[RMDB]
RNA sequence: GGGAACGACUCGAGUAGAGUCGAAAACCGUAGUCAUAGAAGGGCAAAGAGAGAUGCGAGGUCUCACAGUGCGAUGAUGGAGGAGCCGAUGGGGAACAUAGUAUACCAGGGCGAGAGAUGAAAUGCCUAUAGGUUUUGGUUUCGACCAAAACCUAUAAAAAGAAACAACAACAACAAC
Reactivity to 2A3 in 0.01 (KOAc 150mM, MgCl2 10mM, bicine 150mM(pH8.5), 24C), signal-to-noise 2, nucleotides 027 to 126: c000c000g030u050a000g020u040c020a020u060a140g100a100a090g050g020g030c020a000a060a000g170a030g010a030g000a020u110g070c060g060a030g080g000u020c030u030c050a010c040a070g040u100g010c030g090a040u040g020a020u040g030g060a030g020g020a020g010c090c060g090a080u040g000g060g000g000a000a000c000a020u060a040g070u110a070u040a100c010c020a010g060g020g000c000g000a020g010a000g000a050u120g040a040a050a000u050g050c030c000
Reactivity to DMS in 0.01 (KOAc 150mM, MgCl2 10mM, bicine 150mM(pH8.5), 24C), signal-to-noise 3, nucleotides 027 to 126: c010c000g000u030a100g030u010c050a080u030a120g000a080a060g000g000g020c040a040a130a110g020a100g000a060g000a040u010g010c140g000a100g010g020u000c010u010c020a110c110a110g020u000g010c080g010a070u000g010a030u010g000g010a060g000g000a060g000c030c020g020a050u010g000g020g010g020a070a080c110a060u020a070g030u000a110u010a100c060c030a040g000g000g000c010g010a080g000a040g020a100u030g010a050a080a070u020g000c020c070